[RMDB]
RNA sequence: GGGAACGACUCGAGUAGAGUCGAAAAAGCGUGCUAAGCAUCAUCGUGAAUAUGAUUACAGCGCCUGCGAUGGCAUAUAACCGUAUUGCGGAUGGAGCGUCACGUGAGGACUGUGAAGCACAAUGCGGACCGUACCAAAGUUCGCUUUGGUACGGUCAAAAGAAACAACAACAACAAC
Reactivity to DMS in 0.01 (KOAc 150mM, MgCl2 10mM, bicine 150mM(pH8.5), 24C), signal-to-noise 1, nucleotides 027 to 126: a150g020c070g010u010g010c000u000a090a170g040c070a040u000c000a040u000c030g020u010g020a060a060u030a000u010g000a030u000u000a010c060a040g030c190g040c010c000u030g000c260g020a080u000g030g010c010a060u000a020u000a040a020c030c000g000u010a010u000u000g030c040g000g030a010u000g010g000a040g010c000g010u000c010a050c010g000u010g000a130g010g010a110c070u010g040u000g000a080a070g030c040a100c070a080a110u000g000c110g040
Reactivity to 2A3 in 0.01 (KOAc 150mM, MgCl2 10mM, bicine 150mM(pH8.5), 24C), signal-to-noise 1, nucleotides 027 to 126: a000g120c020g000u000g030c020u090a070a020g050c020a050u030c000a000u030c030g050u060g250a090a040u070a020u070g050a010u050u060a000c010a060g000c050g000c150c010u000g020c000g190a190u080g010g000c040a010u080a000u020a170a000c010c010g000u060a040u130u210g030c040g040g040a050u050g070g040a060g040c020g000u020c000a010c040g050u020g080a090g030g040a030c020u050g030u010g000a060a000g030c040a010c080a040a050u060g010c030g050